An RNA of 207 nucleotides, treated with DMS and 2A3 and read out base by base. Values are in units of 0.01, from 0 to 300, in steps of 10. For 2A3 the reverse transcriptase was SuperScript II with manganese.
[RMDB]
RNA sequence: GGGAACGACUCGAGUAGAGUCGAAAAUCCCAAAGGUUGCCGAAUCCGAAAGGUCUGGAGGAACCGCUUUUUGGGGUUAAUCUGCAGUGAAGCUGCAGUAGGGAUACCUUCUGUCCCGCACCCGACAGCUAACUCCGAAGGCAAUAAAGGAAGGAGAACGAUCACUAUAUUUCGAUAUAGUGAUCGUAAAAGAAACAACAACAACAAC
Reactivity to DMS in 0.01 (KOAc 150mM, MgCl2 10mM, bicine 150mM(pH8.5), 24C), signal-to-noise 4, nucleotides 027 to 156: u000c020c000c010a090a120a120g020g020u000u000g010c000c020g020a150a300u000c020c010g020a120a120a140g010g040u000c030u000g010g000a080g010g000a130a140c070c060g010c040u000u000u000u010u020g050g010g030g020u000u000a070a110u000c010u000g000c000a030g010u010g000a150a190g040c000u000g010c010a020g010u000a050g010g000g010a080u000a030c030c090u000u000c030u010g020u000c260c000c010g010c090a070c000c020c020g000a090c120a040g000c020u010a130a200c020u000c020c010g000a100a070g010g000c030a040a060u010a030a080a100g010g010a100a030g010g010a290g010a130
Reactivity to 2A3 in 0.01 (KOAc 150mM, MgCl2 10mM, bicine 150mM(pH8.5), 24C), signal-to-noise 3, nucleotides 027 to 156: u010c010c000c010a040a050a010g020g010u040u010g000c010c010g060a110a110u030c010c010g070a070a060a030g030g000u040c080u090g020g010a010g020g040a080a090c070c020g000c070u140u150u030u070u180g050g000g010g010u010u020a050a030u040c000u000g020c000a010g020u050g260a150a040g150c000u000g000c000a010g000u010a010g000g000g000a000u080a110c010c000u040u020c020u050g000u020c000c000c010g010c000a040c000c020c000g010a080c070a020g000c000u020a030a020c000u010c010c010g040a040a040g000g000c000a010a000u100a080a040a010g020g000a000a020g030g030a050g060a040